[RMDB]
RNA sequence: GGGAACGACUCGAGUAGAGUCGAAAAGGGGUCAAAGCGCUAGUGGCGCAGAUACGACCGACAUGUACUGAAGCCUCCACGGUACAACAGCGGUCGAGUAGCCACUUGGACCGCUUUGACGGAGGCACCCAAACGGCAAAUGUUCGCAUUUGCCGAAGCUCUAUAACAUGUUCGCAUGUUAUAGAGCAAAAGAAACAACAACAACAAC
Reactivity to DMS in 0.01 (KOAc 150mM, MgCl2 10mM, bicine 150mM(pH8.5), 24C), signal-to-noise 2, nucleotides 027 to 156: g020g020g010g040u020c010a030a040a050g000c020g050c020u000a060g030u000g010g020c000g040c090a070g030a080u010a080c020g000a030c000c000g000a040c060a290u020g000u000a030c000u000g000a090a170g020c000c030u000c000c010a300c020g020g000u000a030c020a070a080c130a060g010c000g020g020u000c000g000a060g000u000a080g010c090c020a040c000u000u000g040g010a030c170c010g000c010u000u000u000g000a070c060g020g030a050g040g020c010a040c000c010c000a000a060a240c030g000g000c000a000a020a010u000g020u010u000c300g020c000a030u000u000u000g000c010c000g010a020a070
Reactivity to 2A3 in 0.01 (KOAc 150mM, MgCl2 10mM, bicine 150mM(pH8.5), 24C), signal-to-noise 4, nucleotides 027 to 156: g050g010g010g000u010c010a010a020a030g030c030g010c050u050a030g030u040g060g000c000g020c120a010g030a060u110a030c020g000a000c000c000g010a050c070a150u300g010u010a000c010u030g030a080a020g010c000c000u000c010c000a030c040g030g000u040a050c050a170a010c050a220g120c010g000g010u010c000g000a010g030u040a040g020c030c020a020c040u080u200g050g010a020c030c010g010c000u000u000u010g000a000c000g000g010a010g010g000c000a010c000c010c010a010a090a010c010g000g000c010a010a000a000u020g020u050u090c200g020c130a020u000u000u000g000c000c000g010a000a010
An RNA of 207 nucleotides, treated with DMS and 2A3 and read out base by base. The reactions ran in a buffer of 150 mM KOAc, 10 mM MgCl2 and 150 mM bicine (pH 8.5), at 24 C. The data come from the RNA Mapping Database (RMDB), library RNAMAK. DMS adducts were read by reverse transcription with MarathonRT. The 2A3 profile rests on 6,906 reads. The DMS profile rests on 4,156 reads. For 2A3 the reverse transcriptase was SuperScript II with manganese. Values cover nucleotides 27 to 156.